Structure probing data (2A3 and DMS) for a 177-nucleotide construct. The reactions ran in a buffer of 150 mM KOAc, 10 mM MgCl2 and 150 mM bicine (pH 8.5), at 24 C. The 2A3 profile rests on 1,119 reads. DMS adducts were read by reverse transcription with MarathonRT.
RNA sequence: GGGAACGACUCGAGUAGAGUCGAAAAGAAAAGAAAGCUAUCGACUAGGCUCGAAAGAGCGAUAGCCGGAUGUCGAUCUGCUCCAAGACAUCCGGAGCAGAAAAAGAAAAAGCUAGUCGAGAAGAAAGGGAAUGUGUAUCUUCGGAUACACAUUCCCAAAAGAAACAACAACAACAAC
Reactivity to 2A3 in 0.01 (KOAc 150mM, MgCl2 10mM, bicine 150mM(pH8.5), 24C), signal-to-noise 2, nucleotides 027 to 126: g000a010a100a000a030g080a070a080a040g020c000u010a000u040c000g000a000c000u000a000g000g040c000u000c000g040a090a000a030g010a020g030c060g010a030u120a080g050c000c000g000g000a000u000g050u000c000g000a030u000c060u170g040c000u030c050c000a060a010g000a000c000a000u030c000c000g010g020a000g000c060a030g110a000a100a040a000a000g210a000a060a100a000a000g060c000u000a000g000u000c020g010a030g000a030a020g010a040a100a040
Reactivity to DMS in 0.01 (KOAc 150mM, MgCl2 10mM, bicine 150mM(pH8.5), 24C), signal-to-noise 1, nucleotides 027 to 126: g000a170a130a250a070g000a110a010a000g080c110u000a150u000c000g000a000c000u000a010g000g000c000u000c000g060a300a040a280g000a000g010c000g000a080u010a080g000c000c000g060g070a000u000g040u000c000g030a300u000c000u000g030c070u000c000c000a060a120g000a000c010a000u000c080c020g000g000a020g000c090a090g000a000a070a070a130a100g000a070a220a000a120a160g000c000u000a020g000u000c010g020a060g000a010a200g000a080a070a080